[RMDB]
RNA sequence: GGGAACGACUCGAGUAGAGUCGAAAAUUCGACAUGGCCACCGGCCUGGUCGUCGAAAUCUUCAACGGCGCAGAAGCCGCUCUGGAUUUGAGCUACGGCGAUCCGGUGGCAUAUGUACCGAACAACCGAUCACGUAACGAUUCGUCGUUACGUGAUCAAAAGAAACAACAACAACAAC
Reactivity to 2A3 in 0.01 (KOAc 150mM, MgCl2 10mM, bicine 150mM(pH8.5), 24C), signal-to-noise 2, nucleotides 027 to 126: u020u000c000g000a000c000a010u020g040g010c000c000a000c010c000g000g050c010c080u110g140g000u010c010g000u000c010g000a000a010a100u030c010u090u040c070a300a300c010g010g000c050g020c130a160g100a300a040g030c000c010g020c010u000c030u000g070g050a110u040u050u080g070a080g010c060u080a020c050g000g000c000g050a030u000c010c000g000g000u000g000g000c000a000u010a000u000g000u010a140c080c030g010a030a000c020a030a000c000c050
Reactivity to DMS in 0.01 (KOAc 150mM, MgCl2 10mM, bicine 150mM(pH8.5), 24C), signal-to-noise 2, nucleotides 027 to 126: u010u000c010g020a030c000a010u010g010g010c000c000a000c000c010g000g000c300c170u010g000g000u000c040g020u000c000g050a030a020a010u000c040u000u000c090a050a050c010g010g010c000g030c160a210g000a150a230g010c020c000g030c020u000c100u000g000g010a070u000u000u000g010a100g050c170u000a160c000g000g000c010g000a070u010c000c000g010g020u000g000g020c000a020u000a040u000g000u010a120c170c000g000a050a000c120a090a160c090c030
Source: RMDB library OK2TRN, as collected in RNAgym. An RNA of 177 nucleotides, treated with 2A3 and DMS and read out base by base. The RNA was probed in 150 mM KOAc, 10 mM MgCl2 and 150 mM bicine (pH 8.5) at 24 C. The 2A3 profile rests on 2,540 reads. Values cover nucleotides 27 to 126. 2A3 adducts were read by reverse transcription with SuperScript II with manganese.